[RMDB]
RNA sequence: GGGAACGACUCGAGUAGAGUCGAAAACCACUCCUUAUACCUUGAGUAUUGCUGAAUUCAGUUUAGCGUGCAUGCUCUUGGCUAUUCUCAUAGUGAUUGUCAAAUUUGGAGUUACUUAUUCGUCAAUAAAACACUACCACGUUCGCGUGGUAGUGAACAAGGCUAGUAUCUUCGGAUACUAGCCUUGAAAAGAAACAACAACAACAAC
Reactivity to 2A3 in 0.01 (KOAc 150mM, MgCl2 10mM, bicine 150mM(pH8.5), 24C), signal-to-noise 3, nucleotides 027 to 156: c020c000a010c010u030c010c000u010u070a020u020a150c020c020u040u040g010a000g010u030a050u150u150g020c010u060g040a190a130u180u180c050a110g160u060u100u130a060g040c060g000u070g020c010a000u000g000c000u000c000u010u000g000g000c000u050a050u090u020c070u000c060a200u140a100g060u050g160a180u070u090g090u180c090a070a070a080u040u020u040g000g000a000g050u100u030a000c070u100u210a100u230u160c100g140u080c080a100a120u120a130a070a020a010c000a000c000u000a000c000c000a000c000g030u030u040c150g020c000g130u000g000g000u000a000g000u010g000a000a000
Reactivity to DMS in 0.01 (KOAc 150mM, MgCl2 10mM, bicine 150mM(pH8.5), 24C), signal-to-noise 2, nucleotides 027 to 156: c030c040a110c000u000c020c020u000u000a120u000a040c010c010u000u000g010a060g020u000a010u000u000g020c000u000g030a060a100u000u010c160a180g010u000u000u010a060g040c060g000u000g010c100a170u010g040c000u000c000u000u010g000g010c010u010a080u000u000c030u010c030a220u000a120g010u010g000a070u000u000g010u000c060a020a080a170u000u000u000g010g000a080g010u010u000a110c090u000u010a180u010u000c080g000u000c050a070a140u010a040a090a070a200c000a010c000u000a000c000c000a010c000g000u000u000c260g040c060g040u010g000g020u000a010g010u000g000a020a060
Structure probing data (2A3 and DMS) for a 207-nucleotide construct. For DMS, 3,474 sequencing reads were counted. DMS adducts were read by reverse transcription with MarathonRT. It was measured as part of the RMDB library M2RFPK. Values cover nucleotides 27 to 156. The reactions ran in a buffer of 150 mM KOAc, 10 mM MgCl2 and 150 mM bicine (pH 8.5), at 24 C. The 2A3 profile rests on 1,334 reads.